[RMDB]
RNA sequence: GGGAACGACUCGAGUAGAGUCGAAAAUACCGCGGGCCUGCGGUGCGGCAGUGUGGAGACCUGCCGUAAGCCGUGUUGUUUUGACAACCGGGAGAAAGCGUAUGCGGAGGCAGCGCUUUCAGGGUCUAAAAGUAUGGGAUCUUCGGAUCCCAUACAAUCAUCAAAUGGUGUUCGCACCAUUUGAUGAAAAAGAAACAACAACAACAAC
Reactivity to DMS in 0.01 (KOAc 150mM, MgCl2 10mM, bicine 150mM(pH8.5), 24C), signal-to-noise 1, nucleotides 027 to 156: u000a170c010c000g030c000g050g010g000c060c010u070g020c000g000g030u000g000c010g050g020c000a020g050u010g030u030g020g040a290g070a140c190c000u000g030c000c020g070u020a010a080g010c020c000g000u000g000u000u020g000u030u000u020u000g010a110c000a050a010c000c000g050g030g010a150g010a020a000a010g010c000g020u000a060u010g020c030g040g030a270g000g040c010a100g010c000g010c020u000u000u000c000a040g000g030g000u020c030u020a080a110a200a200g030u010a000u020g000g010g010a010u000c000u020u000c300g070g000a020u000c000c000c000a000u010a030c000a060a110
Reactivity to 2A3 in 0.01 (KOAc 150mM, MgCl2 10mM, bicine 150mM(pH8.5), 24C), signal-to-noise 3, nucleotides 027 to 156: u100a000c000c010g010c010g000g010g030c000c030u050g010c030g010g020u000g010c000g000g000c010a020g010u030g010u070g280g040a070g040a060c000c000u000g000c010c000g010u010a020a000g010c000c020g110u110g000u110u010g020u010u180u110u250g110a010c000a020a020c010c000g020g000g000a010g000a000a000a000g010c010g000u040a300u210g030c030g020g100a040g230g030c000a000g000c000g000c000u000u000u010c000a010g000g000g010u010c010u010a020a100a020a070g010u000a000u000g000g000g000a000u000c010u030u030c150g040g000a000u000c000c000c000a000u000a000c000a000a000
Annotation:
Structure probing data (DMS and 2A3) for a 207-nucleotide construct. The DMS profile rests on 1,958 reads. The RNA was probed in 150 mM KOAc, 10 mM MgCl2 and 150 mM bicine (pH 8.5) at 24 C. High 2A3 reactivity points to a flexible backbone, as in loops and unpaired stretches.